[RMDB]
RNA sequence: GGGAACGACUCGAGUAGAGUCGAAAAGCCCGAACAGAGUGGGAUGGGUUGAGGACGAAGUGCUGGACUGGCUUCAGCAACGGCUGGAUGGCCGCGAAGAGUCCAACCGACACUCCUGAUACAGGAGUACUUAGAUGACUUUCGAGUCAUCUAAGUAAAAAGAAACAACAACAACAAC
Reactivity to 2A3 in 0.01 (KOAc 150mM, MgCl2 10mM, bicine 150mM(pH8.5), 24C), signal-to-noise 9, nucleotides 027 to 126: g030c010c000c000g010a050a040c040a020g090a030g100u090g010g050g070a110u120g050g030g020u050u080g090a120g040g020a000c030g030a100a020g060u040g080c020u020g000g020a040c030u090g120g100c050u030u010c010a010g000c020a050a040c020g030g000c010u060g080g150a180u260g110g000c000c000g020c040g030a070a040g040a020g030u000c010c000a010a010c010c010g010a000c010a010c020u040c010c020u090g030a110u100a210c080a030g030g030a030g050
Reactivity to DMS in 0.01 (KOAc 150mM, MgCl2 10mM, bicine 150mM(pH8.5), 24C), signal-to-noise 9, nucleotides 027 to 126: g020c010c000c010g020a110a130c160a090g010a080g030u010g000g010g010a100u020g010g010g010u000u010g010a120g010g010a050c050g000a160a090g010u020g020c020u010g000g000a030c040u020g010g010c080u000u000c010a050g020c050a130a160c030g000g000c000u000g010g020a110u040g000g010c000c010g010c110g000a090a090g010a300g000u000c000c000a040a060c020c020g010a100c110a080c000u000c010c010u000g000a160u030a070c080a030g000g000a040g010